[RMDB]
RNA sequence: GGGAACGACUCGAGUAGAGUCGAAAAUGGGCAACUCACUUGAAACCAGGAGUUCAAGACCAGACUGGGCAACAUGGCGAAACCUUGCCUCUGCAAAAAAUGCAAAAAUUAGCCAGGCAUGUGGUGCACACCUGUGGUGGUCCCAGCUACCUGGGAGCAAUCGUAAACACUUCGGUGUUUACGAUUGAAAAGAAACAACAACAACAAC
Reactivity to DMS in 0.01 (KOAc 150mM, MgCl2 10mM, bicine 150mM(pH8.5), 24C), signal-to-noise 3, nucleotides 027 to 156: u020g000g030g040c030a080a090c110u000c070a060c070u010u000g000a080a090a140c030c040a100g000g000a120g040u000u000c040a060a080g000a060c070c020a040g000a110c040u000g010g000g020c040a050a040c030a060u000g030g020c030g020a110a120a100c060c030u000u000g020c000c040u010c040u000g000c040a010a000a070a070a080a070u010g000c080a050a050a040a050a100u000u000a160g020c030c160a050g000g010c020a080u000g020u010g070g020u010g000c100a100c080a040c040c000u000g030u010g010g030u000g020g020u000c010c010c010a110g000c050u000a070c060c000u000g010g000g020a110g010
Reactivity to 2A3 in 0.01 (KOAc 150mM, MgCl2 10mM, bicine 150mM(pH8.5), 24C), signal-to-noise 2, nucleotides 027 to 156: u090g010g010g030c040a030a030c020u040c060a070c050u100u120g070a080a050a060c050c040a050g010g010a030g010u040u070c100a120a010g020a040c010c020a030g040a100c020u050g010g020g000c040a070a030c010a100u060g000g020c100g060a090a030a030c000c000u010u010g000c000c000u030c030u040g000c040a040a080a060a060a060a080u070g000c010a020a020a010a060a110u100u080a010g030c010c010a000g000g020c020a020u070g050u060g060g050u070g030c050a020c010a040c090c020u050g020u060g080g070u040g010g010u040c000c010c000a030g030c000u100a160c020c000u000g010g010g000a010g030